[RMDB]
Chemical mapping of a 177-nucleotide RNA with 2A3 and DMS. 2A3 adducts were read by reverse transcription with SuperScript II with manganese. The DMS profile rests on 151,114 reads. The reactions ran in a buffer of 150 mM KOAc, 10 mM MgCl2 and 150 mM bicine (pH 8.5), at 24 C. Values cover nucleotides 27 to 126. Reactivities are rounded to 0.1 and cut off at 0 and 3.
RNA sequence: GGGAACGACUCGAGUAGAGUCGAAAAGGAUCCUUCGUAGUCAGGGUAACUGCCUCGUGUACAGUUACCAGUGAAGACUAGUCAAGGUGUCAUCGUACACGAGGAUGACGUCUUGAAUUAAGGAUCGCUACAAGAUAGUAUUCGUACUAUCUUGUAGAAAAGAAACAACAACAACAAC
Reactivity to 2A3 in 0.01 (KOAc 150mM, MgCl2 10mM, bicine 150mM(pH8.5), 24C), signal-to-noise 3, nucleotides 027 to 126: g020g000a000u000c000c000u010u040c070g070u020a010g000u000c020a020g080g000g000u000a000a010c000u010g010c000c020u090c080g090u090g020u040a040c000a000g000u000u000a000c000c010a010g010u020g090a080a030g010a010c000u010a020g050u000c000a000a000g010g000u000g010u000c000a010u000c010g070u090a030c140a020c070g050a040g080g000a000u000g000a000c000g010u000c000u000u000g000a000a000u070u050a020a000g000g000a000u000c000g000
Reactivity to DMS in 0.01 (KOAc 150mM, MgCl2 10mM, bicine 150mM(pH8.5), 24C), signal-to-noise 9, nucleotides 027 to 126: g000g000a010u000c000c000u000u000c240g010u000a010g010u000c000a180g000g000g010u000a010a010c000u000g010c100c040u010c220g010u010g010u010a240c010a010g010u000u000a010c000c000a100g010u010g010a070a140g010a020c010u000a110g010u000c000a010a010g010g000u000g000u000c000a010u000c010g020u010a080c200a100c200g000a070g000g000a010u000g000a010c010g010u000c000u000u000g000a020a090u010u010a030a010g010g000a010u000c000g010